This 177-nucleotide RNA was probed chemically with DMS and 2A3. The DMS profile rests on 4,701 reads. For 2A3 the reverse transcriptase was SuperScript II with manganese. The reactions ran in a buffer of 150 mM KOAc, 10 mM MgCl2 and 150 mM bicine (pH 8.5), at 24 C.
RNA sequence: GGGAACGACUCGAGUAGAGUCGAAAAGACAGGUCAGGUGUGGAAUCAGAGAGAAAUCAAGAAUGACACUAAGGUUUUUGGCUUGAACAAAGGGAGGAUACAGUGGGCAUUAAUUGAGAUGGGGAACGAAUAGUAUGCUGUUCGCAGCAUACUAUUCAAAAGAAACAACAACAACAAC
Reactivity to DMS in 0.01 (KOAc 150mM, MgCl2 10mM, bicine 150mM(pH8.5), 24C), signal-to-noise 5, nucleotides 027 to 126: g020a130c100a050g010g010u000c040a060g000g010u010g020u000g010g000a100a070u000c060a050g010a210g020a060g020a090a080a080u000c030a040a140g000a100a040u000g000a120c060a050c070u010a080a110g010g020u000u010u000u000u010g010g010c000u000u010g010a070a070c130a030a060a140g000g010g020a090g010g000a070u010a040c100a050g020u010g010g020g000c070a050u000u000a050a080u010u010g010a070g010a130u000g000g010g000g010a060a070c230
Reactivity to 2A3 in 0.01 (KOAc 150mM, MgCl2 10mM, bicine 150mM(pH8.5), 24C), signal-to-noise 5, nucleotides 027 to 126: g020a020c030a000g030g000u060c030a010g030g050u030g020u050g050g050a040a060u070c060a030g050a000g010a000g040a120a070a050u060c020a020a030g060a110a130u100g020a020c010a010c080u080a040a140g100g030u040u030u010u080u080g050g010c000u020u050g030a090a010c040a070a080a020g010g010g010a130g030g000a030u060a110c050a020g000u140g030g000g000c020a040u080u180a080a100u150u180g050a080g020a070u090g020g010g010g000a000a070c050